[RMDB]
RNA sequence: GGGAACGACUCGAGUAGAGUCGAAAAGGAGGUCCCGAGGAGUAUCCAAGCAAAGAAGGGGAAGGAUCUCGAGGAAAACAUCUCCCAAGAAGAAGCGGGAACAAUCUCAAGAAGAGGAGGAUUCCCCAUGGUAAGUGGUUCGCCACUUACAAAAGAAACAACAACAACAAC
Reactivity to 2A3 in 0.01 (KOAc 150mM, MgCl2 10mM, bicine 150mM(pH8.5), 24C), signal-to-noise 9, nucleotides 027 to 129: g040g000a010g000g030u030c010c000c000g020a020g010g010a020g000u070a030u040c050c030a080a040g030c030a110a090a070g060a040a030g050g010g000g010a010a020g030g010a030u000c010u020c020g010a040g020g000a020a050a020a020c060a120u050c030u020c030c010c010a020a010g030a020a000g020a040a010g030c050g010g000g010a020a010c030a040a080u060c020u020c060a020a060g040a050a010g010a050g030g010a000g010g010a010u020u030c010c000c010c000a050u110g050
Reactivity to DMS in 0.01 (KOAc 150mM, MgCl2 10mM, bicine 150mM(pH8.5), 24C), signal-to-noise 9, nucleotides 027 to 129: g020g020a050g030g030u030c050c030c000g030a080g000g010a020g010u000a010u020c090c080a110a100g040c130a090a040a070g030a040a010g010g000g010g010a060a000g000g000a060u040c010u000c000g000a060g040g030a040a040a060a080c180a140u030c070u010c030c030c000a090a050g000a000a000g020a070a070g000c030g000g000g000a040a040c150a070a090u050c040u000c060a040a060g030a050a040g000a080g010g020a040g000g030a130u000u000c020c020c020c070a060u050g030